RNA sequence: GGGAACGACUCGAGUAGAGUCGAAAACGCGAUGGAUACGUCCAUCGCGAAUCCGUCCAAGCCGCGGACGUUAAACUGUGGCACGGUUGUGCCUAGGUGCAACCCUGCUCUAGAUGGCGGCACCCCUGCCCAAGCUACCGUCUACGGACGGUAGCAACGUAAUCGUGGAGUUCGCUCCACGAUUACGAAAAGAAACAACAACAACAAC
Reactivity to 2A3 in 0.01 (KOAc 150mM, MgCl2 10mM, bicine 150mM(pH8.5), 24C), signal-to-noise 1, nucleotides 027 to 156: c020g000c000g000a000u000g010g000a000u010a110c240g160u040c020c000a000u000c000g000c000g000a000a020u040c000c000g000u020c030c000a040a020g000c000c000g020c000g000g000a000c010g020u000u000a020a010a010c010u030g040u220g150g000c010a000c030g000g000u000u010g000u020g010c020c040u100a200g090g060u000g010c000a000a000c000c000c020u000g000c000u010c040u070a050g000a060u050g050g020c000g000g060c020a090c010c000c000c010u100g050c080c050c010a030a000g000c000u000a000c000c000g010u000c000u050a090c210g050g000a000c000g000g000u010a000g000c000a000a000